Structure probing data (DMS and 2A3) for a 207-nucleotide construct. It was measured as part of the RMDB library OK3TST. The RNA was probed in 150 mM KOAc, 10 mM MgCl2 and 150 mM bicine (pH 8.5) at 24 C.
RNA sequence: GGGAACGACUCGAGUAGAGUCGAAAAAGGAUGGAAAACUAGUGGUAAUACAUCCAAACAUUCUACCACCUCUAGCUUCAGAUGGCCAAUCUUUACAGCUUAAUCUUGGAAGUGGCUUGCAGGUUAAUAAUGGACAACUUCAGGUUAAACUUCAAGCCUAUGACACCAAUUUCGAUUGGUGUCAUAGAAAAGAAACAACAACAACAAC
Reactivity to DMS in 0.01 (KOAc 150mM, MgCl2 10mM, bicine 150mM(pH8.5), 24C), signal-to-noise 2, nucleotides 027 to 156: a090g000g040a070u000g040g000a120a050a130a050c060u000a050g030u010g000g010u010a130a130u000a080c040a050u000c020c010a140a110a180c060a100u000u000c040u000a060c020c020a020c020c000u000c040u000a080g000c060u000u000c080a130g010a150u010g030g000c010c050a070a170u000c030u010u000u000a090c060a080g000c000u000u000a060a070u000c040u000u000g040g040a070a060g080u010g000g020c020u010u000g030c020a030g000g000u000u000a060a070u000a130a160u000g000g010a130c070a050a020c050u000u020c020a050g010g010u000u010a020a070a080c010u000u000c010a040a060g020c170
Reactivity to 2A3 in 0.01 (KOAc 150mM, MgCl2 10mM, bicine 150mM(pH8.5), 24C), signal-to-noise 5, nucleotides 027 to 156: a010g030g000a010u040g010g040a090a060a040a090c080u080a080g050u050g110g020u050a090a040u080a150c010a030u000c010c000a000a080a020c050a040u100u060c040u080a080c010c010a030c010c020u050c030u030a030g010c010u060u050c040a020g010a090u050g030g010c020c020a070a140u060c090u090u220u100a100c070a020g020c000u080u160a060a040u060c030u040u050g110g010a040a030g010u020g020g000c000u010u010g000c050a010g010g030u050u020a040a020u110a140a100u180g070g030a030c030a100a070c110u050u040c020a030g070g060u030u050a100a140a000c010u050u030c040a020a000g010c000